Description:
This 177-nucleotide RNA was probed chemically with DMS and 2A3. For 2A3 the reverse transcriptase was SuperScript II with manganese.
RNA sequence: GGGAACGACUCGAGUAGAGUCGAAAAUAUGAGAGAUCGCGUACGAGGAACUCAUUUGUACAAUCCUCUGGAAUGAUUCUUCAAAUUGCGAGGAGAGCGAUAAGAAGAGACGUGAAAGCGUUAGAAAGGGAUUUCUAUUGUUCGCAAUAGAAAUCCCAAAAGAAACAACAACAACAAC
Reactivity to DMS in 0.01 (KOAc 150mM, MgCl2 10mM, bicine 150mM(pH8.5), 24C), signal-to-noise 2, nucleotides 027 to 126: u020a000u000g010a010g000a080g000a080u000c020g000c130g000u040a100c080g000a040g000g000a030a070c070u030c040a030u000u020u020g000u050a070c300a190a110u010c000c040u000c100u010g000g040a070a060u020g040a060u000u000c010u000u000c030a050a300a010u010u000g030c030g020a200g060g010a090g040a100g020c030g020a040u000a070a120g000a070a030g030a040g020a060c000g000u000g000a170a060a040g020c080g030u000u000a050g000a030a030a100
Reactivity to 2A3 in 0.01 (KOAc 150mM, MgCl2 10mM, bicine 150mM(pH8.5), 24C), signal-to-noise 3, nucleotides 027 to 126: u190a040u050g070a020g010a020g030a040u020c050g010c040g040u040a050c040g000a000g000g090a130a050c000u010c150a080u070u050u170g110u030a060c030a010a100u040c000c010u000c030u030g020g050a120a030u110g050a080u100u000c020u000u000c000a060a120a160u090u050g020c020g010a040g000g110a060g030a040g020c030g020a000u020a100a000g020a010a020g020a000g030a010c030g000u020g070a080a020a000g030c020g010u000u030a030g110a050a070a010